[RMDB]
RNA sequence: GGGAACGACUCGAGUAGAGUCGAAAACGAGCUUUUUUAGCAUUUGAACUGUUAGCCGCGCAACUUGCGUUGGGUAUAGAGCGCAUCCAGUGUGAACAACAACAGUGCUGCCCAGAUAAAGACGAAACGUAUUUGAUAUCUUCGGAUAUCAAAUACGAAAAGAAACAACAACAACAAC
Reactivity to 2A3 in 0.01 (KOAc 150mM, MgCl2 10mM, bicine 150mM(pH8.5), 24C), signal-to-noise 4, nucleotides 027 to 126: c030g000a030g080c030u100u170u080u070u190u250a010g000c020a050u120u080u230g080a100a050c040u030g010u060u060a030g040c010c010g000c020g000c020a050a190c130u050u070g010c010g060u110u120g080g010g030u060a100u060a070g140a000g010c030g000c010a020u070c020c030a030g010u010g020u030g080a040a020c040a020a000c000a010a010c000a060g010u010g040c010u030g000c000c020c000a050g010a150u210a030a100a010g110a020c070g070a060a040a020
Reactivity to DMS in 0.01 (KOAc 150mM, MgCl2 10mM, bicine 150mM(pH8.5), 24C), signal-to-noise 5, nucleotides 027 to 126: c100g000a150g000c020u000u000u000u010u000u000a040g020c010a090u000u010u000g020a110a070c100u000g010u010u000a080g010c140c040g000c040g020c020a080a110c130u010u010g020c020g040u010u000g020g000g020u020a080u010a120g010a070g010c040g010c030a050u000c060c080a120g000u000g010u000g000a080a080c100a040a090c070a010a080c060a050g030u000g020c030u000g010c030c030c030a110g010a080u000a060a060a080g010a070c090g000a050a090a180